[RMDB]
RNA sequence: GGGAACGACUCGAGUAGAGUCGAAAAGAUUGAGUUGCGUCAGGAUCCGGCGACGAUAAUCUUCAUCAUCAAUAUAAUUAAGAAGAUACAGCGUCUUGUUUACACGCCCCACCGCCAUGAUGGCCUGGCCUGGUUAAGGAUUCGUCCUUAACCAGGCAAAAGAAACAACAACAACAAC
Reactivity to 2A3 in 0.01 (KOAc 150mM, MgCl2 10mM, bicine 150mM(pH8.5), 24C), signal-to-noise 1, nucleotides 027 to 126: g000a030u130u130g070a060g070u080u130g070c010g090u070c190a090g040g030a230u080c050c020g000g000c000g030a040c020g000a040u140a190a050u000c020u020u040c020a030u000c010a020u040c040a230a020u170a050u140a250a110u170u160a110a080g040a010a000g040a010u100a070c080a040g030c020g000u030c000u000u050g100u060u000u040a050c120a040c010g080c000c000c010c000a020c000c050g000c000c000a000u120g040a050u120g060g000c010c000u040g080
Reactivity to DMS in 0.01 (KOAc 150mM, MgCl2 10mM, bicine 150mM(pH8.5), 24C), signal-to-noise 1, nucleotides 027 to 126: g010a000u000u010g010a150g010u000u030g020c030g000u020c070a090g010g000a130u000c060c100g000g000c120g050a060c050g000a160u010a030a050u000c030u000u000c040a100u000c080a090u050c120a030a140u000a050u010a060a080u000u000a120a130g000a050a020g020a040u000a160c180a040g010c010g030u010c070u010u000g010u010u000u000a050c040a060c060g010c070c050c000c010a070c080c070g000c040c090a050u010g000a120u000g000g000c000c160u010g000
Structure probing data (2A3 and DMS) for a 177-nucleotide construct.
The data come from the RNA Mapping Database (RMDB), library OK2TRN.
Conditions: 150 mM KOAc, 10 mM MgCl2 and 150 mM bicine (pH 8.5), 24 C.